[RMDB]
RNA sequence: GGGAACGACUCGAGUAGAGUCGAAAACGCUAUGCCGUCGAAAUCUGCGAGUCACUCAACAUCCUACACCGAUUCGACAUCCGAGAAAGCAAAUUCGCCAAAAUCAUCGAAGCAUACGCCUUCGCAACGACUUUUCUCUAUUCGUAGAGAAAAGUCGAAAAGAAACAACAACAACAAC
Reactivity to DMS in 0.01 (KOAc 150mM, MgCl2 10mM, bicine 150mM(pH8.5), 24C), signal-to-noise 3, nucleotides 027 to 126: c110g040c060u000a130u000g050c030c090g000u000c040g010a040a100a020u000c080u000g030c040g000a080g000u000c060a150c070u000c080a040a180c120a060u000c050c000u000a150c130a100c140c030g000a110u000u000c060g000a080c060a090u020c030c030g000a040g010a100a080a110g010c120a020a060a190u000u000c040g000c060c090a050a030a090a040u040c110a090u000c040g000a010a040g020c000a080u010a080c200g010c120c060u000u000c010g010c300a130a110
Reactivity to 2A3 in 0.01 (KOAc 150mM, MgCl2 10mM, bicine 150mM(pH8.5), 24C), signal-to-noise 3, nucleotides 027 to 126: c040g020c030u050a050u180g030c050c020g060u030c020g030a090a010a070u060c050u060g050c020g030a010g040u020c020a030c070u080c030a020a070c000a080u050c000c020u050a030c020a020c030c030g040a050u070u080c020g000a020c050a050u040c020c020g020a040g040a040a050a020g060c040a040a030a070u080u060c050g060c050c010a060a060a010a170u120c050a050u100c040g040a000a010g030c010a080u120a180c100g040c030c020u000u000c020g000c030a040a070
Chemical mapping of a 177-nucleotide RNA with DMS and 2A3. It was measured as part of the RMDB library OK2TST. For DMS, 1,353 sequencing reads were counted. The reactions ran in a buffer of 150 mM KOAc, 10 mM MgCl2 and 150 mM bicine (pH 8.5), at 24 C. As a SHAPE reagent, 2A3 marks flexible, mostly unpaired nucleotides at the ribose 2'-OH.